[RMDB]
RNA sequence: GGGAACGACUCGAGUAGAGUCGAAAAGAUUAUGUGGGAGAGGCGCCCUUUCGUUUCUUCGGAUAAUUAAUUGCCAGUCGCUGGCUUUAGCGAUGUUGAUGUCAUCUGUAGCGAUGACUAUGCUACCUUAAGGUAUGAUCCGGAUACCACCGGUAAAGAGUAAUGAGUAGUUCGCUACUCAUUACUCAAAAGAAACAACAACAACAAC
Reactivity to DMS in 0.01 (KOAc 150mM, MgCl2 10mM, bicine 150mM(pH8.5), 24C), signal-to-noise 3, nucleotides 027 to 156: g000a090u000u000a020u000g040u000g010g000g010a090g040a020g020g010c050g020c290c100c120u010u000u010c040g040u000u000u000c020u000u000c030g010g010a060u010a040a050u000u000a080a120u010u000g020c000c010a130g020u000c010g010c010u000g010g050c110u000u000u000a040g040c000g020a040u000g010u020u000g000a180u010g000u000c000a020u000c010u000g020u010a150g040c100g000a030u000g010a020c020u010a050u010g020c010u000a030c010c030u010u010a080a120g020g010u000a030u000g000a130u010c020c000g020g010a160u000a130c110c060a150c000c000g010g010u000a050a060a200
Reactivity to 2A3 in 0.01 (KOAc 150mM, MgCl2 10mM, bicine 150mM(pH8.5), 24C), signal-to-noise 2, nucleotides 027 to 156: g030a040u070u120a030u130g150u160g120g030g000a010g010a010g020g010c010g020c030c070c000u070u130u100c030g000u010u030u010c000u030u020c030g030g010a030u040a060a060u120u090a030a110u130u220g020c000c010a040g040u030c000g020c050u020g050g010c070u100u060u110a000g010c000g000a000u040g040u020u110g080a060u080g010u000c010a020u000c030u060g240u230a030g070c020g080a000u010g000a000c010u000a010u090g050c010u010a020c020c010u130u180a120a100g030g010u050a060u130g040a040u030c000c000g010g000a020u060a090c020c050a030c020c000g000g010u020a050a070a000
Structure probing data (DMS and 2A3) for a 207-nucleotide construct. Reactivities are given for positions 27 through 156. The data come from the RNA Mapping Database (RMDB), library OK3TST.